[RMDB]
RNA sequence: GGGAACGACUCGAGUAGAGUCGAAAACUCGGAUUGAUGGGGGAAUAGAGACCUCGAUAAUUGACCACCCGAAAGAAAGAACCCUAUCGCCAGAGGAAGUUAUUCAUUACUACGUUGGGAGAUACGACCGUUCGUUGCAAGGUCUUGCGAUUGUAAGCUAACCGAAUGGAUUCGUCCAUUCGGUUAGAAAAGAAACAACAACAACAAC
Reactivity to 2A3 in 0.01 (KOAc 150mM, MgCl2 10mM, bicine 150mM(pH8.5), 24C), signal-to-noise 1, nucleotides 027 to 156: c030u010c020g040g020a090u040u110g000a050u110g000g000g000g000g100a010a010u050a090g090a010g030a070c020c010u020c080g010a100u110a140a130u070u100g080a040c010c050a020c030c000c030g040a040a060a010g020a050a110a010g030a040a100c000c000c030u040a010u010c000g000c010c010a030g000a030g030g040a020a030g030u020u050a120u160u120c040a020u050u230a010c010u020a000c000g020u010u040g010g060g000a040g020a020u030a080c110g010a030c030c090g020u030u020c020g040u010u000g040c030a050a020g030g000u010c000u010u040g000c020g080a060u000u240g100u130a100a030g070
Reactivity to DMS in 0.01 (KOAc 150mM, MgCl2 10mM, bicine 150mM(pH8.5), 24C), signal-to-noise 2, nucleotides 027 to 156: c030u000c020g030g010a150u000u000g010a060u020g000g010g020g010g010a140a110u000a070g000a120g010a060c000c000u010c020g020a100u000a050a130u000u020g010a080c000c020a120c020c000c040g000a080a140a080g030a110a100a090g010a110a170c000c000c010u010a070u000c010g010c070c010a070g010a070g010g000a070a120g000u000u010a080u000u000c060a130u000u020a110c020u000a040c040g020u000u000g020g000g000a180g020a090u000a090c050g000a050c030c030g020u000u000c020g050u010u000g060c080a060a060g010g030u000c050u000u020g010c050g000a130u000u010g030u000a090a160g000